[RMDB]
RNA sequence: GGGAACGACUCGAGUAGAGUCGAAAAUAAAAGGACAACGAAAUGCGCCUCUGCAACCUCCAGCUGGUGUUGUCUGGCAACCUGAUCAAAACUACCGAGUUUGAUCAGGCCAAUGCAGAGAAAAAAACGCUAACUUACUGUUCGCAGUAAGUUAGCGAAAAGAAACAACAACAACAAC
Reactivity to DMS in 0.01 (KOAc 150mM, MgCl2 10mM, bicine 150mM(pH8.5), 24C), signal-to-noise 1, nucleotides 027 to 126: u000a050a080a080a060g010g010a010c030a010a000c040g030a120a060a070u010g030c170g030c190c000u030c020u000g030c000a050a070c050c020u000c080c050a190g010c160u000g020g000u010g000u000u000g000u010c010u000g000g000c080a090a110c040c000u000g000a010u000c000a000a000a010a050c030u000a160c300c240g030a060g000u000u000u000g000a000u000c000a000g000g000c030c050a050a050u000g060c000a050g000a110g010a010a000a060a030a040a140a060
The data come from the RNA Mapping Database (RMDB), library M2PK90. The record gives the reactivity of an RNA of 177 nucleotides to DMS. The DMS profile rests on 652 reads.